[RMDB]
RNA sequence: GGGAACGACUCGAGUAGAGUCGAAAAGGCUGCGUAUCACUCUAGGGUACGUGAUAGUGCGAUAUAAGAAGCACUGGUACAUGCCGGCAGGGACAGUUAAGAGAUGGCCGCUGUCUCGUGUCCCUGCAAAAGGAGUUCUCGUUCGCGAGAACUCCAACCCCUCCUAGUUGUUCGCAACUAGGAGGGGAAAAGAAACAACAACAACAAC
Reactivity to 2A3 in 0.01 (KOAc 150mM, MgCl2 10mM, bicine 150mM(pH8.5), 24C), signal-to-noise 1, nucleotides 027 to 156: g010g010c020u020g000c060g080u050a020u030c020a030c220u120c160u190a090g090g020g000u030a020c050g000u040g060a020u120a080g030u030g010c020g050a010u050a040u060a300a170g050a090a040g010c000a010c020u000g010g000u110a060c030a070u110g000c010c000g050g000c000a000g000g000g000a000c000a020g050u070u230a220a060g010a010g000a010u030g130g020c140c010g130c110u000g040u000c000u000c000g010u000g000u050c000c020c000u010g000c010a000a000a000a000g000g000a000g000u000u000c000u000c010g050u050u020c100g000c030g110a000g010a000a000c000u060c000c000a010a000
Structure probing data (2A3) for a 207-nucleotide construct. Values cover nucleotides 27 to 156. The reactions ran in a buffer of 150 mM KOAc, 10 mM MgCl2 and 150 mM bicine (pH 8.5), at 24 C. The data come from the RNA Mapping Database (RMDB), library M2RFPK.